RNA sequence: GGGAACGACUCGAGUAGAGUCGAAAAUUAAAAGUACAGAUCACAUGACUAGAAAAAGAUCAGUACAAAAACUAGUCAUGAAAAAGAUACGAAAAGGAUAUAGAAAUAUAUACCAUCGUAUCAAAAAGUUAAUGCAAGGAUUCGUCCUUGCAUUAACAAAAGAAACAACAACAACAAC
Reactivity to 2A3 in 0.01 (KOAc 150mM, MgCl2 10mM, bicine 150mM(pH8.5), 24C), signal-to-noise 1, nucleotides 027 to 126: u150u090a010a010a000a010g110u080a050c050a090g110a100u070c070a010c000a110u000g000a000c010u000a000g130a090a180a010a070a060g090a130u150c070a010g170u130a110c060a040a070a000a010a040c010u010a010g020u020c010a020u010g000a030a000a000a000a030g000a000u010a000c000g000a070a080a080a110g000g000a000u000a000u000a010g000a030a050a000u020a000u000a010u010a060c010c000a000u000c000g000u000a030u040c000a000a070a000a020a000
Reactivity to DMS in 0.01 (KOAc 150mM, MgCl2 10mM, bicine 150mM(pH8.5), 24C), signal-to-noise 1, nucleotides 027 to 126: u030u010a030a060a080a090g030u000a180c190a130g030a110u000c070a280c010a000u000g020a010c000u010a020g020a070a050a120a110a100g000a150u000c130a120g030u000a040c090a050a090a080a160a100c000u000a000g000u010c000a010u020g000a040a040a050a080a120g000a010u010a010c000g000a000a060a070a180g000g000a060u000a010u000a000g010a130a100a040u010a000u000a000u000a100c000c000a120u000c000g000u000a000u000c000a020a050a090a080a100
An RNA of 177 nucleotides, treated with 2A3 and DMS and read out base by base. It was measured as part of the RMDB library M2PK90. DMS adducts were read by reverse transcription with MarathonRT. For 2A3, 1,437 sequencing reads were counted. The RNA was probed in 150 mM KOAc, 10 mM MgCl2 and 150 mM bicine (pH 8.5) at 24 C. The DMS profile rests on 1,157 reads. Values cover nucleotides 27 to 126. 2A3 adducts were read by reverse transcription with SuperScript II with manganese. As a SHAPE reagent, 2A3 marks flexible, mostly unpaired nucleotides at the ribose 2'-OH.